[RMDB]
RNA sequence: GGGAACGACUCGAGUAGAGUCGAAAAGAUAUGGAGACGCAUUCGAUAAGCAGUGAUCGGAAACGAUCAUACUGCUUUUGACGAUGCGUCUCCUAAGUCAAAAGGUGGGUGCUUCGGCACCCACCAACCUUAACCACCACUUCGGUGGUGGUUAAGGAAAAGAAACAACAACAACAAC
Reactivity to DMS in 0.01 (KOAc 150mM, MgCl2 10mM, bicine 150mM(pH8.5), 24C), signal-to-noise 2, nucleotides 027 to 126: g000a040u000a300u010g010g010a000g000a020c020g030c000a000u000u010c000g000a230u010a000a030g010c000a020g010u000g000a010u000c000g000g000a150a050a110c000g020a000u000c000a050u000a070c020u000g000c000u000u010u020u000g000a300c300g000a020u000g000c000g010u000c000u000c010c000u000a000a070g020u000c020a110a080a160a080g020g010u000g000g030g000u000g020c010u000u050c280g020g030c010a000c000c000c000a000c000c010a000a010
The record gives the reactivity of an RNA of 177 nucleotides to DMS. DMS adducts were read by reverse transcription with MarathonRT. Source: RMDB library TTRDEL, as collected in RNAgym.